[RMDB]
Structure probing data (DMS and 2A3) for a 177-nucleotide construct.
The 2A3 profile rests on 4,364 reads.
For 2A3 the reverse transcriptase was SuperScript II with manganese.
It was measured as part of the RMDB library OK1LIB.
The reactions ran in a buffer of 150 mM KOAc, 10 mM MgCl2 and 150 mM bicine (pH 8.5), at 24 C.
RNA sequence: GGGAACGACUCGAGUAGAGUCGAAAAGGGUGGGGGGUCACCCACCGUUCAUAUCGGGCCUACCGCCUUCCUCGGCUUGGGUGUUGUCGACAACAACGGCAACGGCGCACGAGUCCAACGCGUGGUCAAUACCACCUCUGUUCGCAGAGGUGGUAUUAAAAGAAACAACAACAACAAC
Reactivity to DMS in 0.01 (KOAc 150mM, MgCl2 10mM, bicine 150mM(pH8.5), 24C), signal-to-noise 5, nucleotides 027 to 126: g010g000g020u000g000g000g010g000g010g010u010c100a080c020c000c020a030c010c030g000u030u020c140a090u050a090u030c050g000g020g000c010c010u020a090c040c030g010c030c020u010u000c080c010u010c070g010g000c060u010u000g000g010g030u020g020u000u000g000u000c010g000a140c180a130a090c300a140a180c020g020g000c020a030a020c020g000g000c070g010c050a070c040g000a080g000u010c030c050a050a120c080g000c040g010u010g000g000u010c100
Reactivity to 2A3 in 0.01 (KOAc 150mM, MgCl2 10mM, bicine 150mM(pH8.5), 24C), signal-to-noise 5, nucleotides 027 to 126: g090g000g010u030g010g020g000g000g010g080u110c070a110c030c010c010a010c010c010g010u060u050c040a050u060a090u280c060g030g020g010c000c030u100a190c050c040g010c010c000u030u070c000c010u060c020g020g000c000u070u090g010g050g030u090g040u040u020g000u020c030g020a070c040a300a010c030a040a050c070g020g000c020a010a010c010g080g000c060g030c010a060c050g030a020g030u010c030c020a040a030c040g050c030g080u060g010g020u060c010